[RMDB]
RNA sequence: GGGAACGACUCGAGUAGAGUCGAAAAAGCCAUACCAUUACGAUGGUAUGGCAAGUCCGUGACGGCGAUGGAUCCCGCCUGGCCGAUGCCGAACUGCCGAUCUGGCUGAUGGUUCCUGCCCUGUCAAAAAACGUAAAGCACUUCGGUGCUUUACGAAGUUAUAAUUCCAGUUCGCUGGAAUUAUAACAAAAGAAACAACAACAACAAC
Reactivity to 2A3 in 0.01 (KOAc 150mM, MgCl2 10mM, bicine 150mM(pH8.5), 24C), signal-to-noise 6, nucleotides 027 to 156: a000g010c000c000a000u000a000c010c000a010u050u040a050c250g100a020u010g010g010u010a010u000g000g000c000a010a010g020u000c020c000g000u020g030a040c030g000g040c050g050a080u120g010g010a020u050c020c020c010g010c010c020u020g010g010c010c030g060a060u140g050c020c030g120a160a110c080u120g020c020c010g070a110u050c070u120g030g010c020u040g030a130u090g020g010u020u040c000c000u020g010c000c000c030u090g020u030c020a010a000a030a080a080a080c010g000u000a000a000a000g000c000a010c010u030u120c200g060g010u000g000c000u000u000u000a000c000g000a000a000
Reactivity to DMS in 0.01 (KOAc 150mM, MgCl2 10mM, bicine 150mM(pH8.5), 24C), signal-to-noise 2, nucleotides 027 to 156: a160g010c000c000a030u000a000c000c000a050u000u010a190c230g020a150u000g000g010u010a000u000g010g000c000a010a020g020u000c010c050g010u010g000a080c060g030g000c040g000a140u000g000g000a070u010c040c010c020g000c020c020u010g030g000c000c060g020a130u010g000c030c000g000a060a080c090u000g000c030c000g010a080u010c050u010g020g020c030u010g010a150u010g040g020u000u000c020c040u000g000c010c060c040u000g040u020c010a010a090a050a060a090a180c020g000u000a010a000a010g000c000a020c000u010u000c300g040g030u000g000c000u010u000u000a000c000g010a010a050